[RMDB]
RNA sequence: GGGAACGACUCGAGUAGAGUCGAAAAUGAAAGAUGGGCACGAUCGUUUGUCAAGACUGCAAUGAAACCAUUCAGCAUUUUGAAGAUGAGAAAGUGACGAUACUUUACGGAACGUGCGGACAGUGCAUCCAGUGAUAGGGUUCGCCCUAUCACUGGAAAAAGAAACAACAACAACAAC
Reactivity to 2A3 in 0.01 (KOAc 150mM, MgCl2 10mM, bicine 150mM(pH8.5), 24C), signal-to-noise 1, nucleotides 027 to 126: u180g050a020a050a030g070a030u130g000g080g000c030a000c000g030a010u040c040g050u070u000u140g220u000c000a030a000g000a100c120u000g030c080a010a050u070g070a180a010a050c090c060a040u000u010c000a040g050c040a050u000u000u030u060g040a000a010g010a030u030g000a020g040a110a040a080g040u030g030a030c070g010a020u060a140c050u010u080u010a070c000g040g030a110a050c010g020u040g030c030g020g000a050c030a020g040u050g050c020a060
Reactivity to DMS in 0.01 (KOAc 150mM, MgCl2 10mM, bicine 150mM(pH8.5), 24C), signal-to-noise 2, nucleotides 027 to 126: u010g020a070a040a050g010a080u010g020g020g030c010a020c030g000a120u000c020g000u000u000u030g040u000c020a010a020g010a070c130u000g000c120a040a070u000g030a140a180a160c230c050a100u010u000c050a040g020c070a090u000u000u010u000g000a000a000g030a070u000g020a060g010a050a080a120g020u000g000a070c120g020a080u010a040c010u000u000u010a150c060g000g000a110a070c070g010u000g000c000g040g000a110c100a060g010u000g000c120a130
This 177-nucleotide RNA was probed chemically with 2A3 and DMS.
As a SHAPE reagent, 2A3 marks flexible, mostly unpaired nucleotides at the ribose 2'-OH.
DMS adducts were read by reverse transcription with MarathonRT.
It was measured as part of the RMDB library RFMREP.
In probing experiments dimethyl sulfate is read out at A N1 and C N3, which are open when not base-paired.
For DMS, 1,212 sequencing reads were counted.